[RMDB]
RNA sequence: GGGAACGACUCGAGUAGAGUCGAAAACGCAUAUUCGAAGGCCAGGGACAAAGCGACCCUUGUGCACUUCUCUUAUUUCUUUUUAAGCCACGAGGGCAAUAACUUAGCCUCCAUCCUGAGAAUUGAAGAUACAGACUCUGUUCGCAGAGUCUGUAUCAAAAGAAACAACAACAACAAC
Reactivity to DMS in 0.01 (KOAc 150mM, MgCl2 10mM, bicine 150mM(pH8.5), 24C), signal-to-noise 2, nucleotides 027 to 126: c090g000c180a080u000a040u000u000c060g020a300a030g000g000c120c130a170g000g000g000a040c030a050a030a060g070c120g000a160c050c000c000u000u010g020u000g030c080a120c060u000u010c080u000c060u040u030a080u000u010u000c020u000u000u000u040u000a060a070g000c300c000a000c030g020a020g000g010g020c040a070a050u000a040a130c040u020u020a100g000c010c000u000c020c010a220u000c020c000u010g000a300g000a030a040u000u010g020a070a100
Reactivity to 2A3 in 0.01 (KOAc 150mM, MgCl2 10mM, bicine 150mM(pH8.5), 24C), signal-to-noise 2, nucleotides 027 to 126: c020g010c020a040u050a050u150u060c030g020a060a000g020g000c000c000a010g010g020g040a020c020a020a140a000g090c050g110a170c000c000c000u020u000g030u050g000c050a050c060u150u080c000u000c020u110u180a150u100u280u150c060u060u280u060u020u090a020a020g000c040c020a030c060g020a020g000g040g000c060a000a030u100a120a050c030u030u080a020g010c000c000u000c000c000a020u000c000c000u050g000a030g020a060a030u060u090g020a080a010